About this RNA
Structure probing data (DMS) for a 177-nucleotide construct. The reactions ran in a buffer of 150 mM KOAc, 10 mM MgCl2 and 150 mM bicine (pH 8.5), at 24 C.

[RMDB]
RNA sequence: GGGAACGACUCGAGUAGAGUCGAAAAUGAUAAUCAGCGUGUGAGAAUUCUGAGUUCUAUCAACCAACUGUUAAACUUAGUGAAUAAGGAUAGUUGGGGGGCUGUAUCUACGAAACCUGUGGAAGAGUAAUAGUGCAUGCUUCGGCAUGCACUAUUAAAAAGAAACAACAACAACAAC
Reactivity to DMS in 0.01 (KOAc 150mM, MgCl2 10mM, bicine 150mM(pH8.5), 24C), signal-to-noise 2, nucleotides 027 to 126: u010g000a050u000a130a150u000c020a030g000c050g020u000g010u000g020a130g000a100a040u000u000c100u000g010a110g030u000u010c040u010a090u010c030a090a290c010c010a020a080c020u000g000u000u010a100a100a220c010u000u000a040g000u020g000a080a190u000a020a000g000g000a070u000a000g010u000u000g000g010g050g000g000g010c060u020g000u000a020u000c010u000a090c070g000a120a100a060c060c040u000g060u010g000g000a090a070g020a130g000